[RMDB]
RNA sequence: GGGAACGACUCGAGUAGAGUCGAAAAGGCCUCAUCACGCGUUAAAAGCACACGUGCGCGCAUCAUACCUUUGAUUGCUGCAAUAGAAUAUAUGAUAGCAUCUUCUUGUCGAAUCAUAGCAGGAUAUAACGCUUGGUAAUCUAUACCUGGGGCGCCACCAAGUGGUCAUGUUCGCAUGACCACUUGGAAAAGAAACAACAACAACAAC
Reactivity to DMS in 0.01 (KOAc 150mM, MgCl2 10mM, bicine 150mM(pH8.5), 24C), signal-to-noise 2, nucleotides 027 to 156: g010g030c020c040u010c010a020u000c040a050c080g010c000g010u020u020a000a060a100a170g010c140a070c050a120c090g040u010g030c120g020c060g000c040a110u030c030a060u000a050c050c050u060u000u000g050a080u000u000g020c080u010g070c030a100a100u010a100g000a110a130u010a050u000a050u000g020a060u000a080g020c030a090u010c210u000u000c050u000u000g010u000c110g020a120a120u010c030a100u000a080g020c080a060g040g030a080u000a160u000a030a070c040g060c010u000u030g030g080u000a100a090u050c060u010a170u000a050c090c020u000g020g010g040g010c040g010c020c070a060
Reactivity to 2A3 in 0.01 (KOAc 150mM, MgCl2 10mM, bicine 150mM(pH8.5), 24C), signal-to-noise 4, nucleotides 027 to 156: g100g000c030c010u000c010a060u060c040a020c050g000c000g000u000u020a020a060a040a070g030c010a070c020a010c150g090u070g020c060g020c030g000c010a010u020c010a030u150a240c020c070u100u050u080g070a080u040u150g010c040u060g000c000a020a080u060a140g130a170a010u180a020u040a020u190g050a030u060a040g040c010a050u010c060u200u020c050u090u090g080u120c030g060a130a050u030c050a010u050a040g040c080a030g060g030a010u030a020u010a120a000c000g020c000u000u040g030g000u030a100a070u060c060u140a210u130a080c000c000u010g010g000g010g000c000g020c000c000a000
Background
The record gives the reactivity of an RNA of 207 nucleotides to DMS and 2A3. The 2A3 profile rests on 1,853 reads. Conditions: 150 mM KOAc, 10 mM MgCl2 and 150 mM bicine (pH 8.5), 24 C. For DMS, 2,016 sequencing reads were counted.